[RMDB]
RNA sequence: GGGAACGACUCGAGUAGAGUCGAAAAUUUACACCUACAAUUGCCUUUAUCUACAGUUUGGAUUUGCCUUGCUGUGGUCUCAACAAUCUAGACCAAUAGGGGUAAAGUUCUUGCGGCCUUAAGGCUCAACUACCUACGAAUUCGUUCGUAGGUAGUUAAAAGAAACAACAACAACAAC
Reactivity to DMS in 0.01 (KOAc 150mM, MgCl2 10mM, bicine 150mM(pH8.5), 24C), signal-to-noise 7, nucleotides 027 to 126: u000u000u010a100c130a150c020c010u000a080c160a120a100u000u010g010c020c020u000u010u000a030u010c090u010a080c050a020g010u000u000u000g000g010a280u000u010u010g020c020c010u000u000g010c060u000g020u000g010g010u000c040u010c220a110a110c170a070a060u000c150u010a060g010a040c050c030a110a110u010a030g000g000g000g010u000a010a040a050g000u000u000c040u000u000g020c110g000g000c030c040u000u010a060a090g020g010c010u000c140
Reactivity to 2A3 in 0.01 (KOAc 150mM, MgCl2 10mM, bicine 150mM(pH8.5), 24C), signal-to-noise 5, nucleotides 027 to 126: u080u040u070a050c030a050c010c000u070a040c050a160a250u090u090g020c000c000u100u100u050a080u060c060u060a020c010a050g010u030u060u030g050g010a130u070u080u240g200c010c010u010u070g000c020u040g020u020g010g020u000c010u020c020a070a160c020a050a100u050c050u130a020g030a030c000c010a010a050u020a050g000g010g000g030u030a050a050a010g030u050u010c020u040u050g060c050g010g040c020c000u120u220a140a050g020g000c010u010c040
Chemical mapping of a 177-nucleotide RNA with DMS and 2A3. 2A3 adducts were read by reverse transcription with SuperScript II with manganese. The reactions ran in a buffer of 150 mM KOAc, 10 mM MgCl2 and 150 mM bicine (pH 8.5), at 24 C. Source: RMDB library OK2TRN, as collected in RNAgym.